Structure probing data (DMS and 2A3) for a 177-nucleotide construct.
For 2A3, 1,248 sequencing reads were counted.
Source: RMDB library OK2TST, as collected in RNAgym.
Conditions: 150 mM KOAc, 10 mM MgCl2 and 150 mM bicine (pH 8.5), 24 C.
DMS adducts were read by reverse transcription with MarathonRT.
For DMS, 1,939 sequencing reads were counted.
RNA sequence: GGGAACGACUCGAGUAGAGUCGAAAAGGGCAGCGGCAGGUCAGGGCUGCGACAGGGUAUCCAGGUAACGUUGCAAUAUGACGGCCGCGGCGACCGCGUCGUCGUCGGCAUGCGUGCCCAGCAGUUACAGCUAAUCGUGGUUCGCCACGAUUAGCUGAAAAGAAACAACAACAACAAC
Reactivity to DMS in 0.01 (KOAc 150mM, MgCl2 10mM, bicine 150mM(pH8.5), 24C), signal-to-noise 2, nucleotides 027 to 126: g000g000g010c000a090g020c030g030g050c070a080g020g010u010c060a100g000g020g000c060u000g010c020g000a040c070a130g000g000g040u000a100u000c030c060a110g000g020u010a060a110c150g000u000u000g010c040a100a080u000a140u010g020a040c000g010g000c010c010g000c030g000g010c070g010a040c020c220g010c180g000u000c040g060u010c040g010u010c000g050g020c040a060u020g000c010g000u010g030c000c010c020a100g040c060a100g010u020u000a130
Reactivity to 2A3 in 0.01 (KOAc 150mM, MgCl2 10mM, bicine 150mM(pH8.5), 24C), signal-to-noise 1, nucleotides 027 to 126: g040g000g000c040a300g260c060g120g010c040a060g030g040u020c010a010g020g170g050c040u040g000c000g000a000c000a010g150g010g000u130a080u090c040c030a030g030g020u030a060a070c030g030u000u040g030c040a090a000u090a100u260g030a020c020g040g000c030c030g010c030g000g000c020g000a000c020c120g080c130g080u020c040g010u020c020g010u030c030g030g000c020a050u090g030c010g030u030g060c000c010c010a000g030c000a000g000u070u150a090